Structure probing data (DMS and 2A3) for a 177-nucleotide construct. It was measured as part of the RMDB libraries RFM100 and RFMREP.
[RMDB]
RNA sequence: GGGAACGACUCGAGUAGAGUCGAAAAACGCGGCCGUUACGACGGCCGCGAACAGGGUGUGUGACUGGUUGACCAGAGGGGCGUGCACUUUGUUCACCCUGUGGGCCACCUAGUCACCAACCCUCAAACUUUUGCUUAAUUUCGAUUAAGCAAAAGUAAAAGAAACAACAACAACAAC
Reactivity to DMS in 0.01 (KOAc 150mM, MgCl2 10mM, bicine 150mM(pH8.5), 24C), signal-to-noise 2, nucleotides 027 to 126: a080c030g060c040g010g030c000c020g080u010u000a080c210g030a100c020g070g050c010c030g030c020g000a030a010c080a050g000g010g050u000g000u020g020u000g010a010c010u000g010g010u000u000g010a050c020c000a070g010a120g010g010g010g020c220g010u000g020c000a150c200u020u020u010g000u000u000c020a030c000c000c000u000g000u010g000g000g010c030c050a020c040c010u000a020g000u000c000a010c000c030a030a030c010c000c000u000c140a120a060
Reactivity to 2A3 in 0.01 (KOAc 150mM, MgCl2 10mM, bicine 150mM(pH8.5), 24C), signal-to-noise 4, nucleotides 027 to 126: a020c030g000c020g010g000c040c050g000u090u100a090c300g040a000c000g130g000c000c000g000c000g000a010a010c000a000g010g000g000u030g010u020g010u000g000a000c000u000g000g000u030u030g030a060c010c000a020g020a020g130g010g040g020c240g070u050g010c030a050c120u170u220u260g020u040u050c010a030c010c000c000u110g100u020g090g010g000c030c000a010c000c000u090a000g010u000c010a010c000c000a010a020c000c000c000u010c010a110a150